[RMDB]
RNA sequence: GGGAACGACUCGAGUAGAGUCGAAAAAGGUCGACACCAUUGGCUCGCACCUCAAGAUCGAGGUGUCGCCCCACGCCAUUGACGGCGCCGACCCGCGUAUCCUCCAGGGCGUGCUGGAUGACCUGGCAGGUACGCUGUGGUUCGCCACAGCGUACCUAAAAGAAACAACAACAACAAC
Reactivity to DMS in 0.01 (KOAc 150mM, MgCl2 10mM, bicine 150mM(pH8.5), 24C), signal-to-noise 3, nucleotides 027 to 126: a030g010g010u000c000g000a030c030a050c050c020a160u010u000g000g000c040u000c110g030c020a040c000c000u010c010a120a200g010a140u010c200g000a010g010g050u000g010u000c130g000c140c000c090c030a130c130g000c010c020a040u000u010g000a140c130g000g020c020g010c090c000g000a040c030c010c060g000c120g020u000a110u010c020c000u000c020c020a010g020g000g010c020g010u000g000c160u010g000g000a070u000g000a030c010c030u000g000g010c280
Reactivity to 2A3 in 0.01 (KOAc 150mM, MgCl2 10mM, bicine 150mM(pH8.5), 24C), signal-to-noise 2, nucleotides 027 to 126: a000g040g010u000c000g020a040c010a040c100c030a060u040u090g020g000c010u040c070g030c010a060c030c000u000c020a120a140g070a300u240c070g000a020g010g000u030g020u020c020g010c010c000c000c000a060c060g010c020c000a050u060u190g130a090c140g020g030c010g000c030c020g010a050c000c000c020g020c000g040u060a130u110c000c020u010c020c010a000g030g030g030c020g030u050g000c050u100g100g170a130u100g020a040c000c000u000g010g050c050
The data come from the RNA Mapping Database (RMDB), library OK2TRN. Structure probing data (DMS and 2A3) for a 177-nucleotide construct. Values are in units of 0.01, from 0 to 300, in steps of 10. The reactions ran in a buffer of 150 mM KOAc, 10 mM MgCl2 and 150 mM bicine (pH 8.5), at 24 C. For 2A3, 2,296 sequencing reads were counted.